[RMDB]
RNA sequence: GGGAACGACUCGAGUAGAGUCGAAAAAGUUUAGAUUUCGAUCUAAACUAGACCACUAAGAGGAUGACGAGUGACUACGACGCAUCUAGUAGAAUGGGCCCAGCUGUGAGCAGUUCGCUGCUCACAAUCGGCAGUAGCAAUUCGUUGCUACUGCCGAAAAAGAAACAACAACAACAAC
Reactivity to DMS in 0.01 (KOAc 150mM, MgCl2 10mM, bicine 150mM(pH8.5), 24C), signal-to-noise 1, nucleotides 027 to 126: a010g000u010u000u000a010g000a010u020u020u010c160g010a040u010c000u000a000a010a000c000u010a060g000a180c030c010a080c090u000a050a050g000a120g020g030a010u000g020a140c000g040a170g030u010g010a190c230u000a030c060g010a130c190g000c010a000u000c010u000a100g000u000a030g010a020a110u030g000g000g000c000c020c010a150g000c220u000g040u010g000a020g020c000a000g000u000u010c260g010c020u000g000c000u010c000a000c010a000a060
Reactivity to 2A3 in 0.01 (KOAc 150mM, MgCl2 10mM, bicine 150mM(pH8.5), 24C), signal-to-noise 1, nucleotides 027 to 126: a000g010u000u010u010a010g000a000u090u060u140c200g050a020u030c010u000a000a000a000c000u010a020g040a020c020c010a030c040u040a040a040g080a050g300g010a030u020g010a060c030g000a040g080u080g100a170c120u040a060c200g190a030c010g040c000a030u030c020u010a010g090u020a000g040a200a140u070g000g020g000c020c000c030a030g080c100u050g000u000g000a000g020c010a010g030u020u110c190g040c090u000g000c000u030c000a000c010a000a000
Notes
Chemical mapping of a 177-nucleotide RNA with DMS and 2A3. The DMS profile rests on 800 reads. For DMS the reverse transcriptase was MarathonRT. The data come from the RNA Mapping Database (RMDB), library M2PK50.